RNA sequence: GGGAACGACUCGAGUAGAGUCGAAAAACGGAACCACCGUCUUCAUCCCCACUGUGUACGAUCCGUCGGAGCUGCGGUCCGACGUGACGGGGAAGGUCGUCAGAUAUCUUCAGGACGACGGCAGUGACUUCCAGGGCACAUUCGUGUGCCCUGGAAGAAAAGAAACAACAACAACAAC
Reactivity to 2A3 in 0.01 (KOAc 150mM, MgCl2 10mM, bicine 150mM(pH8.5), 24C), signal-to-noise 1, nucleotides 027 to 126: a040c020g010g010a000a060c040c020a080c080c000g000u010c050u100u050c020a100u070c000c000c030c010a010c000u070g030u010g040u080a030c010g070a300u010c000c010g000u010c030g000g000a090g110c030u070g020c190g060g000u010c000c000g030a000c000g000u020g010a010c030g020g000g020g040a050a030g100g020u000c000g020u000c010a000g070a170u110a150u230c130u250u130c050a040g080g000a000c000g000a000c000g000g000c010a000g000u000g020a020
Reactivity to DMS in 0.01 (KOAc 150mM, MgCl2 10mM, bicine 150mM(pH8.5), 24C), signal-to-noise 2, nucleotides 027 to 126: a020c030g000g010a080a300c200c230a120c030c000g050u000c020u010u000c130a190u010c020c000c000c000a060c040u000g010u000g010u000a110c050g000a070u000c000c000g020u000c000g000g020a010g040c060u010g050c110g020g000u000c000c000g000a010c000g000u000g000a020c040g010g010g010g010a110a050g020g010u000c020g000u000c010a030g000a110u010a080u030c220u000u000c080a170g010g020a050c020g010a020c030g000g010c020a020g000u000g000a300